[RMDB]
RNA sequence: GGGAACGACUCGAGUAGAGUCGAAAAGAUAUGGACGAAGAACUCGAACUACGACGGAGUGUCGGAAACGACAUGACGUCGCGAGGGAGUCCUAAGUCAAACGUCAUUCACUUCGGUGAAUGACGAAGUUGAUAUUGUCGUUCGCGACAAUAUCAACAAAAGAAACAACAACAACAAC
Reactivity to DMS in 0.01 (KOAc 150mM, MgCl2 10mM, bicine 150mM(pH8.5), 24C), signal-to-noise 4, nucleotides 027 to 126: g010a090u010a180u010g000g010a000c000g000a220a070g010a040a080c010u010c000g010a120a130c080u010a160c000g000a010c000g010g010a300g010u000g010u000c000g000g000a080a030a210c000g000a010c000a000u000g010a300c000g000u000c020g000c050g000a030g020g000g000a030g000u010c000c000u010a020a220g010u000c020a070a090a200c040g000u000c000a020u000u000c000a010c000u010u020c230g020g000u000g010a000a000u000g010a000c010g000a010a010
Reactivity to 2A3 in 0.01 (KOAc 150mM, MgCl2 10mM, bicine 150mM(pH8.5), 24C), signal-to-noise 4, nucleotides 027 to 126: g050a000u100a050u180g020g000a000c030g150a270a130g020a080a030c010u010c010g040a180a130c140u160a080c290g010a000c010g000g000a040g020u000g000u010c000g010g000a050a090a030c010g000a000c000a000u030g010a010c000g000u000c010g000c000g010a000g000g020g000a020g000u040c000c000u020a140a030g050u020c010a100a050a030c010g010u010c000a000u000u000c000a000c010u040u080c230g180g000u000g020a000a000u020g000a000c000g000a020a000